[RMDB]
RNA sequence: GGGAACGACUCGAGUAGAGUCGAAAAGGAUCCUUCGUAGUCAGGAGGGUAACUGCCUCGUGUACAGUUACCAGUGACUAGACAAGGUGUCAUCGUACACGAGGAUGACGUCUUAAAUUUAGGAUCGCUACUUGAUAGUAUUCGUACUGUCAAGUAGAAAAGAAACAACAACAACAAC
Reactivity to 2A3 in 0.01 (KOAc 150mM, MgCl2 10mM, bicine 150mM(pH8.5), 24C), signal-to-noise 9, nucleotides 027 to 126: g020g000a010u000c010c000u020u060c070g100u030a010g000u000c020a020g040g280a140g150g160g000u000a000a010c000u010g010c000c020u100c100g090u100g030u060a050c010a010g000u000u000a000c000c000a020g080u000g020a000c000u010a020g020a060c090a020a010g000g000u000g000u000c000a010u000c010g080u090a030c130a020c090g090a050g070g000a000u000g000a000c000g000u000c000u000u040a040a020a020u100u060u010a010g000g000a000u000c000g000
Reactivity to DMS in 0.01 (KOAc 150mM, MgCl2 10mM, bicine 150mM(pH8.5), 24C), signal-to-noise 9, nucleotides 027 to 126: g000g000a010u000c000c000u000u000c240g010u000a010g010u000c010a070g010g020a210g010g010g010u000a000a010c000u000g000c100c030u000c200g010u010g010u010a230c010a010g010u000u000a010c000c000a160g010u000g010a020c010u000a040g000a110c240a030a020g010g010u000g000u000c000a010u000c000g010u010a060c170a080c220g000a050g010g000a010u000g000a010c000g000u000c000u000u000a040a070a140u000u000u000a020g020g000a010u000c000g000